[RMDB]
RNA sequence: GGGAACGACUCGAGUAGAGUCGAAAACAGCAUCAAGGGAAAGGGUUACGAUGCCCUGGUGACUUUUACAGUAAACAUAUACAAGGAAGUCAUGACCAAGGAGGGACUCUCCAUCACCAAGAUAAGCAGUUAUGAAGGUAACGACUCGCAGCUUAUCCACUCUAAAAACUUUCGAGUUUUUAGAGUGAAAAGAAACAACAACAACAAC
Reactivity to 2A3 in 0.01 (KOAc 150mM, MgCl2 10mM, bicine 150mM(pH8.5), 24C), signal-to-noise 5, nucleotides 027 to 156: c030a000g040c010a030u050c060a100a090g020g010g030a040a120a050g070g010g010u030u060a100c080g040a050u160g020c000c000c010u030g000g000u040g040a030c000u070u060u050u120a070c070a050g030u100a010a190a040c070a090u210a020u050a170c040a070a070g050g000a000a000g010u010c010a030u050g070a040c040c040a060a070g030g010a010g010g040g040a050c020u010c010u000c070c010a040u050c020a010c040c040a030a010g000a010u010a020a010g000c010a000g010u060u100a100u150g120a140a070g050g010u050a060a010c040g040a040c040u030c110g070c040a040g000c010u000u010a010u000c010
Reactivity to DMS in 0.01 (KOAc 150mM, MgCl2 10mM, bicine 150mM(pH8.5), 24C), signal-to-noise 2, nucleotides 027 to 156: c070a130g000c060a120u000c040a090a120g030g000g030a090a130a070g010g020g020u000u010a080c150g010a200u010g000c020c000c020u020g020g030u000g010a040c030u000u000u000u020a120c050a300g000u010a100a070a110c160a090u000a150u000a070c090a130a210g000g030a030a060g010u010c030a100u010g000a070c030c040a070a110g020g000a050g030g000g000a100c070u000c020u000c020c020a070u000c030a090c050c020a080a180g030a060u000a060a040g040c030a130g030u000u000a130u000g010a090a070g000g030u000a030a060c040g000a080c030u000c080g000c060a130g020c050u000u000a040u000c000